[RMDB]
RNA sequence: GGGAACGACUCGAGUAGAGUCGAAAAGCGGCGCGGCCGUGGUAAAAAAUAACACGGUGAUGAGCCCCACGCGUAUCACCGACCAGAAUAACAUCAGCGUGGUCACCUGCGCCUCGGGUCAGGUGGUGCCCCUGACGGCCGUACACGUGGUGGGCAACUUUAACUUUAAGUUCGCUUAAAGUUAAAGAAAAGAAACAACAACAACAAC
Reactivity to DMS in 0.01 (KOAc 150mM, MgCl2 10mM, bicine 150mM(pH8.5), 24C), signal-to-noise 1, nucleotides 027 to 156: g030c100g020g020c030g040c030g010g000c000c000g000u000g030g090u000a010a020a180a080a090a110u000a040a030c030a150c060g020g050u000g010a070u020g000a200g010c030c030c000c030a010c060g130c050g000u020a040u010c050a040c030c020g020a070c060c020a130g020a090a100u000a050a170c110a130u010c030a060g010c060g020u030g010g010u000c020a070c020c020u000g020c080g070c000c030u000c050g030g010g010u010c020a170g010g000u010g010g010u000g010c000c100c020c000u010g030a050c070g010g020c020c030g030u000a090c000a060c000g030u010g030g000u010g020g020g040c010a100a110
Reactivity to 2A3 in 0.01 (KOAc 150mM, MgCl2 10mM, bicine 150mM(pH8.5), 24C), signal-to-noise 3, nucleotides 027 to 156: g040c020g060g000c020g000c000g040g020c000c000g000u010g020g000u060a080a120a080a060a010a020u220a090a040c030a010c060g010g000u020g010a050u040g030a020g000c000c000c000c000a020c010g000c010g070u060a010u040c020a000c030c000g060a070c000c050a040g120a260a130u190a180a050c030a100u100c020a010g100c030g100u090g060g030u040c020a020c020c000u050g000c070g030c120c040u190c130g120g000g010u040c010a020g020g000u000g000g060u090g010c000c000c000c010u010g000a010c000g000g000c000c000g010u010a000c060a010c070g020u040g020g050u060g000g020g000c000a010a020